[RMDB]
RNA sequence: GGGAACGACUCGAGUAGAGUCGAAAACGAUCAAGCACGUGAGCAGGAGUAUCGAAGAGGAUUAGAGACCCACGUAGUUCCUUGCAGUCAACGAUGCCAACGUAGUGGUGAUUUUGGUCAUUGCUAGACGAUCAGCGUGCUUCGGCACGCUGAUCGUAAAAGAAACAACAACAACAAC
Reactivity to 2A3 in 0.01 (KOAc 150mM, MgCl2 10mM, bicine 150mM(pH8.5), 24C), signal-to-noise 1, nucleotides 027 to 126: c060g030a000u080c080a060a000g050c070a070c080g070u070g000a030g000c020a040g000g040a080g000u180a000u110c130g010a160a000g120a170g040g000a000u080u080a080g080a040g000a150c000c000c000a020c000g000u010a110g190u030u000c000c000u000u240g000c000a000g110u130c000a000a000c120g040a100u000g060c040c000a000a000c000g030u030a000g070u130g020g000u020g000a000u000u180u140u070g190g000u040c010a000u010u010g030c050u010a000g000
Background
Conditions: 150 mM KOAc, 10 mM MgCl2 and 150 mM bicine (pH 8.5), 24 C. The record gives the reactivity of an RNA of 177 nucleotides to 2A3. Reactivities are given for positions 27 through 126. For 2A3 the reverse transcriptase was SuperScript II with manganese. Values are in units of 0.01, from 0 to 300, in steps of 10. For 2A3, 508 sequencing reads were counted. Source: RMDB library RFM100, as collected in RNAgym.